[RMDB]
RNA sequence: GGGAACGACUCGAGUAGAGUCGAAAAGAUACGCCGUGCAGGAUUCGGCGGACGGUGACGCGCUGCGUCAAAGAUCGGUGAUUGGCGGCUCGAAGCCUUUUACCCUGCAGCCAAUGUGAGCGGAUUCACACGACAGUAACUUCGGUUACUGUCGUGUAAAAGAAACAACAACAACAAC
Reactivity to DMS in 0.01 (KOAc 150mM, MgCl2 10mM, bicine 150mM(pH8.5), 24C), signal-to-noise 1, nucleotides 027 to 126: g010a160u000a130c030g000c000c000g010u000g000c140a080g000g020a200u010u000c090g000g000c000g010g030a070c110g030g030u010g010a190c120g040c050g040c140u030g020c010g010u010c010a030a120a070g010a050u000c090g080g030u000g010a040u040u000g010g030c000g010g010c030u010c120g040a090a270g000c010c010u000u000u000u000a080c030c010c030u000g030c030a100g000c000c050a000a100u000g020u000g000a080g030c030g000g010a070u000u010c050